[RMDB]
RNA sequence: GGGAACGACUCGAGUAGAGUCGAAAAGCGCAAUACAAUAGCAGGUAGAGAGAGAGACAGGAAGGUGCUCAGAUGGACUAUGUGCUGUAAGGCACAUACGAAAGAGGAAUUCCUAGUAAGUGUGUAUUUAUACUAGAUACUUCGGUAUCUAGUAUAAAAAAGAAACAACAACAACAAC
Reactivity to DMS in 0.01 (KOAc 150mM, MgCl2 10mM, bicine 150mM(pH8.5), 24C), signal-to-noise 9, nucleotides 027 to 126: g020c060g010c060a080a050u010a090c150a080a090u020a070g010c060a050g000g020u010a040g010a080g000a080g000a060g010a080g010a050c090a060g010g010a060a050g000g010u010g000c040u010c050a070g010a140u010g000g010a200c230u000a010u010g010u000g010c000u000g010u050a090a100g000g000c000a000c000a000u000a010c040g000a090a080a090g000a040g000g010a130a110u000u000c000c010u000a080g020u030a050a070g010u020g000u000g010u010a070u010
Reactivity to 2A3 in 0.01 (KOAc 150mM, MgCl2 10mM, bicine 150mM(pH8.5), 24C), signal-to-noise 9, nucleotides 027 to 126: g040c040g000c040a040a060u100a110c060a060a090u070a110g040c060a020g040g020u140a040g020a000g000a000g000a000g000a000g010a070c020a010g020g040a040a020g070g010u090g040c010u020c030a030g030a140u090g020g010a020c020u000a000u010g010u000g000c010u020g070u200a050a070g040g000c000a000c000a000u010a010c020g040a040a040a010g020a000g010g030a020a030u020u010c000c000u020a050g050u090a120a080g020u040g020u030g020u100a090u010